Conditions: 150 mM KOAc, 10 mM MgCl2 and 150 mM bicine (pH 8.5), 24 C. This 207-nucleotide RNA was probed chemically with 2A3. The data come from the RNA Mapping Database (RMDB), library M2RFPK.
RNA sequence: GGGAACGACUCGAGUAGAGUCGAAAAGUUAUGCUCUCGCUGCCUAAUGGCGGUGCGGGAAACCCACUCUAAAGUCCUUAGGGUUAGCCCCUUAAGGCGGGGUUCGGAGGCACCUCGCAACAGAAGCUGAAACUGUGCACAUUCGUGUGCACAGUAAUGUUGGUUUUGGAUUCGUCCAAAACCAACAAAAAGAAACAACAACAACAAC
Reactivity to 2A3 in 0.01 (KOAc 150mM, MgCl2 10mM, bicine 150mM(pH8.5), 24C), signal-to-noise 1, nucleotides 027 to 156: g070u130u110a130u230g090c010u010c000u000c020g000c010u060g030c000c030u300a300a160u210g000g030c010g080g020u020g000c010g000g040g000a070a010a010c000c060c020a040c020u130c050u110a130a090a200g170u060c000c000u010u010a000g070g000g000u040u110a050g030c000c020c010c020u000u020a010a020g000g020c000g000g000g000g020u000u140c120g060g060a060g020g010c000a000c020c000u000c030g000c000a000a000c000a020g060a000a030g000c000u000g020a090a000a000c000u000g000u000g000c000a000c000a040u030u070c170g040u070g000u000g050c000a000c000a000g000u000a000a010
For 2A3, 699 sequencing reads were counted.